[RMDB]
RNA sequence: GGGAACGACUCGAGUAGAGUCGAAAAUGUGGAAGUCCUGCUCGGGGCGGAAGCAUUAAAACCAUUCGAGCUAGUCAAUGCGUGGCCUGUCUCUCCGCAGCGUGUUGGCGAAUGUAAAGAGUGACUAUUGACCACGCAACGUUCGCGUUGCGUGGAAGAUACAUAAUCCGUUCGCGGAUUAUGUAUCAAAAGAAACAACAACAACAAC
Reactivity to 2A3 in 0.01 (KOAc 150mM, MgCl2 10mM, bicine 150mM(pH8.5), 24C), signal-to-noise 5, nucleotides 027 to 156: u030g010u020g020g010a000a030g010u010c010c010u050g100c120u090c150g010g000g000g000c020g010g010a010a000g000c000a000u020u120a020a030a000a050c040c020a020u060u090c060g030a030g010c010u060a020g040u000c000a010a020u020g020c020g020u070g080g020c040c040u110g040u080c030u010c010u010c110c050g000c030a030g000c010g010u030g000u030u000g000g000c020g010a030a040u120g040u160a040a120a040g040a020g030u080g030a040c030u080a110u210u230g100a080c000c000a010c030g000c000a000a000c000g010u060u070c200g000c000g100u000u010g000c010g000u000g000g000a010a010
Reactivity to DMS in 0.01 (KOAc 150mM, MgCl2 10mM, bicine 150mM(pH8.5), 24C), signal-to-noise 2, nucleotides 027 to 156: u000g000u000g010g020a300a290g000u000c000c030u000g000c160u000c190g000g010g000g010c050g020g010a300a300g010c020a030u000u000a020a090a090a150c010c010a090u020u000c050g020a110g000c020u000a130g020u000c020a020a070u000g010c020g030u010g010g040c000c000u000g020u010c040u000c020u010c040c040g040c050a150g020c050g020u010g020u000u000g020g000c040g010a100a050u010g030u010a070a070a120g020a120g000u000g020a090c040u020a110u000u010g000a280c000c000a010c010g020c010a010a000c000g010u000u000c210g020c160g010u000u000g000c000g020u000g010g000a000a030